[RMDB]
RNA sequence: GGGAACGACUCGAGUAGAGUCGAAAAGGACAUCGUUAUGAUUUGAGUAGUAAGCACAUCGUGAAAUCUGUUGAACAGUCAUUAAUCAAUUUGAAUGUAGAUUAUUUAGAUAGUCUACUCAUUCAUCCGAGAAACUGGUAUUCGUACCAGUUUCUCGAAAAGAAACAACAACAACAAC
Reactivity to 2A3 in 0.01 (KOAc 150mM, MgCl2 10mM, bicine 150mM(pH8.5), 24C), signal-to-noise 5, nucleotides 027 to 126: g060g020a020c030a080u080c070g060u120u120a070u160g070a160u070u060u050g020a030g010u060a030g020u050a120a080g120c020a030c000a100u100c070g020u030g130a040a070a040u070c060u030g050u100u090g070a110a040c010a020g090u040c030a020u000u260a060a060u080c100a020a110u020u110u230g080a060a050u040g020u020a000g010a020u000u010a050u070u190u050a130g040a170u000a010g010u000c010u020a010c050u010c000a000u010u000c010a040u030c030
Reactivity to DMS in 0.01 (KOAc 150mM, MgCl2 10mM, bicine 150mM(pH8.5), 24C), signal-to-noise 2, nucleotides 027 to 126: g010g000a080c090a050u010c070g000u020u000a030u040g000a080u020u000u000g030a050g000u000a090g030u010a080a090g070c230a120c060a020u010c090g000u000g000a050a070a010u020c050u010g000u010u010g000a090a080c150a090g020u000c090a050u000u050a030a110u010c150a050a120u010u000u010g010a010a040u000g000u000a020g020a040u010u000a030u020u010u050a150g020a000u000a030g010u000c000u030a000c050u050c070a010u000u000c000a060u010c290